[RMDB]
RNA sequence: GGGAACGACUCGAGUAGAGUCGAAAAAGAGGACCAACAAUGGAAGCCUUGGAAGGUUCAAGAUCACCAUUGAUUCUCCUGGAGCUCACCGCUACAGGCUGAGGGUGAGAUAUCAUUCAGAUGUCUCGAGACUAACUAUAUUCGUAUAGUUAGUCUCAAAAGAAACAACAACAACAAC
Reactivity to DMS in 0.01 (KOAc 150mM, MgCl2 10mM, bicine 150mM(pH8.5), 24C), signal-to-noise 9, nucleotides 027 to 126: a090g010a100g000g000a140c050c050a120a200c060a050a040u000g000g010a120a090g020c230c020u000u000g010g010a120a120g010g010u010u000c030a040a040g010a070u000c080a160c020c010a050u000u000g000a140u010u000c040u000c010c000u000g010g000a040g010c020u000c200a070c240c140g000c030u000a040c050a030g000g000c170u000g000a060g010g000g010u000g010a020g000a030u000a010u000c010a110u010u010c230a130g000a030u000g000u000c010u000c030
Reactivity to 2A3 in 0.01 (KOAc 150mM, MgCl2 10mM, bicine 150mM(pH8.5), 24C), signal-to-noise 9, nucleotides 027 to 126: a000g130a060g030g050a020c020c020a030a060c050a030a020u040g010g020a060a040g050c020c000u030u030g080g050a180a100g200g030u160u110c030a020a010g010a060u070c030a020c060c010a020u010u080g070a090u170u000c020u000c010c010u010g010g010a010g000c020u040c070a090c030c070g020c020u040a030c010a040g030g060c110u060g020a050g030g050g030u100g010a010g010a000u020a000u010c060a060u240u210c060a050g020a030u020g010u010c000u020c070
Structure probing data (DMS and 2A3) for a 177-nucleotide construct. The RNA was probed in 150 mM KOAc, 10 mM MgCl2 and 150 mM bicine (pH 8.5) at 24 C. Values cover nucleotides 27 to 126. For DMS, 32,453 sequencing reads were counted.